[RMDB]
An RNA of 207 nucleotides, treated with 2A3 and DMS and read out base by base.
Values are in units of 0.01, from 0 to 300, in steps of 10.
Values cover nucleotides 27 to 156.
The data come from the RNA Mapping Database (RMDB), library OK3TST.

RNA sequence: GGGAACGACUCGAGUAGAGUCGAAAAGAUAAUGUUUGAACUGAAGCACGCAUAGAGAACUUUUCUCUGGGAAGGCUUGAGUCCAUCAAACACAGAGGGAAUAGACCUUCUGUUGUUUGCUCUGUGGUAGGUGGAUAGUCUCUUAUCGAUAAAGUCACUUUAAGCCUUUUUUCGAAAAGGCUUAAAGAAAAGAAACAACAACAACAAC
Reactivity to 2A3 in 0.01 (KOAc 150mM, MgCl2 10mM, bicine 150mM(pH8.5), 24C), signal-to-noise 2, nucleotides 027 to 156: g030a030u070a060a090u130g120u040u140u090g060a090a030c030u040g000a000a010g030c060a020c100g050c020a040u100a080g000a010g000a030a070c030u160u110u130u040c040u000c020u030g020g020g080a100a060g020g000c000u000u040g020a030g050u000c020c000a030u050c020a020a300a000c000a000c000a000g000a010g000g040g080a060a080u110a100g090a120c000c050u170u100c070u160g080u060u030g000u010u020u040g060c010u070c010u040g030u000g040g030u030a030g000g000u020g010g000a020u010a080g020u000c000u000c000u050u050a030u070c020g020a030u130a110a170a010g080u060c100a010
Reactivity to DMS in 0.01 (KOAc 150mM, MgCl2 10mM, bicine 150mM(pH8.5), 24C), signal-to-noise 2, nucleotides 027 to 156: g000a130u020a070a120u000g010u000u000u000g000a100a070c030u000g000a050a080g020c020a050c070g000c130a160u010a070g030a060g010a040a170c120u000u010u010u000c000u020c040u000g010g000g020a140a090g020g000c010u010u000g000a120g010u000c010c010a060u000c040a060a080a170c010a020c030a030g020a030g010g010g010a050a150u000a080g010a080c030c060u000u010c040u000g030u000u010g020u010u010u000g010c010u000c000u010g020u010g020g020u000a190g030g030u020g000g010a070u000a090g010u000c010u010c040u000u000a080u010c020g010a130u000a060a070a140g000u000c060a240

The 2A3 profile rests on 1,013 reads. Conditions: 150 mM KOAc, 10 mM MgCl2 and 150 mM bicine (pH 8.5), 24 C.